RNA sequence: GGGAACGACUCGAGUAGAGUCGAAAAGAAAGUGAUCGAUGAGACACAACGUACACCCUUACCAAUCAGCUCAUAUUGCGUGGAGAAGGGCCACUGUGGGGGGCCCAUCUUCUUAGGGAACGCAGAGCAGCGGUGCGACGUUCGCGUCGCACCGCUGAAAAGAAACAACAACAACAAC
Reactivity to 2A3 in 0.01 (KOAc 150mM, MgCl2 10mM, bicine 150mM(pH8.5), 24C), signal-to-noise 1, nucleotides 027 to 126: g220a020a020a160g000u080g050a300u020c130g020a040u090g010a030g080a000c000a000c010a030a000c030g050u090a050c100a130c010c000c050u000u100a070c060c000a020a270u140c000a110g060c080u000c090a020u100a200u290u300g060c070g020u020g090g000a010g000a000a150g000g000g050c000c000a040c010u070g020u230g040g170g000g000g000g000c000c020c000a000u000c000u010u000c000u070u120a040g050g000g040a020a000c000g040c010a020g000a030g080
Structure probing data (2A3) for a 177-nucleotide construct. For 2A3, 355 sequencing reads were counted. 2A3 adducts were read by reverse transcription with SuperScript II with manganese. The reactions ran in a buffer of 150 mM KOAc, 10 mM MgCl2 and 150 mM bicine (pH 8.5), at 24 C.